An RNA of 177 nucleotides, treated with 2A3 and DMS and read out base by base.
Reactivities are given for positions 27 through 126.
Source: RMDB library RFMREP, as collected in RNAgym.
The reactions ran in a buffer of 150 mM KOAc, 10 mM MgCl2 and 150 mM bicine (pH 8.5), at 24 C.
[RMDB]
RNA sequence: GGGAACGACUCGAGUAGAGUCGAAAAUCCUAGUAUCUCAACCGAAAAGGGGAUAUAGUUCAACUGGUAGAGCACUGUAUUUUUCAUACAGCGAAAGGCACAAGACUUCGAACAUUAUAGCAGUUAGCGUUCUUUGGAAGUUCGCUUCCAAAGAACGAAAAGAAACAACAACAACAAC
Reactivity to 2A3 in 0.01 (KOAc 150mM, MgCl2 10mM, bicine 150mM(pH8.5), 24C), signal-to-noise 1, nucleotides 027 to 126: u000c020c000u080a100g010u060a110u040c020u000c040a120a150c060c030g110a000a000a110a110g070g010g000g010a000u020a000u080a080g110u010u130c000a080a080c060u050g090g090u060a070g000a020g140c050a010c020u010g030u060a020u000u180u000u090u130c040a020u010a030c020a010g000c010g090a060a000a010g070g020c030a000c010a100a120g100a080c030u090u040c070g060a100a050c050a020u020u150a110u100a030g000c010a030g040u010u050a030g040
Reactivity to DMS in 0.01 (KOAc 150mM, MgCl2 10mM, bicine 150mM(pH8.5), 24C), signal-to-noise 2, nucleotides 027 to 126: u010c020c020u000a070g020u000a030u000c060u000c020a140a120c070c050g020a030a070a080a070g000g000g010g000a060u000a010u000a050g000u000u000c090a040a090c040u000g010g000u000a050g030a110g040c050a130c010u010g010u010a010u000u010u020u000u010c170a110u000a000c000a010g020c030g020a040a040a080g010g010c070a080c130a040a050g020a050c060u000u000c080g000a080a070c140a060u010u040a080u000a060g020c020a070g010u010u010a100g020